[RMDB]
RNA sequence: GGGAACGACUCGAGUAGAGUCGAAAAGCAAACUUAUAGUUGCCAACGACGACAACUACGCUCUAGCUGCUUAAUGCGGCUAGCAGUCGCUAGGGGAUGCCUGUAAACCCGAAACGACUGUCAGAUAGAACAGGAUCGCCGCCAAGUUCGCUGUAGACGGAAGUGUCAAGUUCGCUUGACACUUCCGAAAAGAAACAACAACAACAAC
Reactivity to 2A3 in 0.01 (KOAc 150mM, MgCl2 10mM, bicine 150mM(pH8.5), 24C), signal-to-noise 1, nucleotides 027 to 156: g000c020a070a020a100c100u170u100a110u000a200g010u050u040g020c020c040a080a010c070g060a020c010g050a070c020a060a060c020u160a060c070g020c040u080c010u100a000g010c000u010g050c000u120u300a130a000u300g020c000g000g010c000u000a000g000c000a000g010u030c000g020c080u020a020g070g010g010g000a000u170g070c000c010u020g040u150a000a020a240c010c000c000g070a070a070a000c050g000a000c030u000g030u020c000a020g010a200u230a160g070a020a000c030a020g000g140a020u030c060g020c120c000g020c000c010a050a000g010u070u150c060g000c010u000g040u040a020g100a150

An RNA of 207 nucleotides, treated with 2A3 and read out base by base.
Conditions: 150 mM KOAc, 10 mM MgCl2 and 150 mM bicine (pH 8.5), 24 C.
For 2A3 the reverse transcriptase was SuperScript II with manganese.
Reactivities are given for positions 27 through 156.